RNA sequence: GGGAACGACUCGAGUAGAGUCGAAAAGUGCGCUAUUUCGAUAGCGCACAAAGGCGGCGAGUCUCGCUCGGCGGCCCGCGACAGCGCGCAGCGCAGCCGGAACAUAACGCCACUUCGGUGGCGUUAAUGCAUCAGUAGUAUUCGUACUACUGAUGCAAAAAGAAACAACAACAACAAC
Reactivity to DMS in 0.01 (KOAc 150mM, MgCl2 10mM, bicine 150mM(pH8.5), 24C), signal-to-noise 6, nucleotides 027 to 126: g020u000g010c000g010c000u000a010u000u000u010c200g000a020u000a010g000c000g000c000a010c000a010a040a090g010g010c020g010g000c010g010a040g000u000c020u000c050g000c030u010c150g010g010c000g010g030c010c050c010g010c010g010a130c300a090g010c020g030c270g010c050a050g010c010g020c010a040g010c000c010g010g010a070a070c130a160u010a010a000c000g000c000c000a010c000u000u010c180g030g020u000g000g010c000g010u000u000a000a070
Reactivity to 2A3 in 0.01 (KOAc 150mM, MgCl2 10mM, bicine 150mM(pH8.5), 24C), signal-to-noise 2, nucleotides 027 to 126: g000u000g010c010g010c000u000a010u010u130u030c060g120a010u020a010g000c000g000c000a000c000a000a000a010g040g000c020g000g010c020g050a020g050u040c030u030c080g050c040u100c050g020g000c010g000g010c020c070c000g000c010g000a080c060a100g060c010g000c010g010c050a050g010c030g000c030a000g020c010c010g010g010a040a030c030a040u070a010a010c000g000c010c000a010c000u050u060c180g070g010u000g000g000c000g000u000u010a000a010
Conditions: 150 mM KOAc, 10 mM MgCl2 and 150 mM bicine (pH 8.5), 24 C. Structure probing data (DMS and 2A3) for a 177-nucleotide construct. For DMS, 9,672 sequencing reads were counted. DMS (dimethyl sulfate) methylates the pairing face of unpaired adenines and cytosines.